The record gives the reactivity of an RNA of 170 nucleotides to 2A3.

RNA sequence: GGGAACGACUCGAGUAGAGUCGAAAACAACUGUUAUCUUGCCACUGCAUUGUUAACACUCCAACAAAUAGAGUUGAAGUUUAAUCCACCUGCUCUACAAAGGGCUGGUGAAUCUGCUAACUUUUGUAACCCCGGGUCUUCGGACCCGGGAAAAGAAACAACAACAACAAC
Reactivity to 2A3 in 0.01 (KOAc 150mM, MgCl2 10mM, bicine 150mM(pH8.5), 24C), signal-to-noise 1, nucleotides 027 to 129: c000a020a010c000u000g010u260u080a200u010c110u000u000g060c000c070a090c110u020g010c020a000u070u070g030u000u000a160a000c040a060c070u080c030c050a040a040c070a140a060a070u270a010g000a000g020u090u000g050a080a000g000u000u020u100a010a010u000c010c000a000c000c000u050g000c050u000c050u070a080c070a000a300a090g000g060g000c010u010g000g000u000g000a010a010u040c000u000g000c000u060a000a000c010u120u000u000u090g080u200a080a080c000
2A3 adducts were read by reverse transcription with SuperScript II with manganese.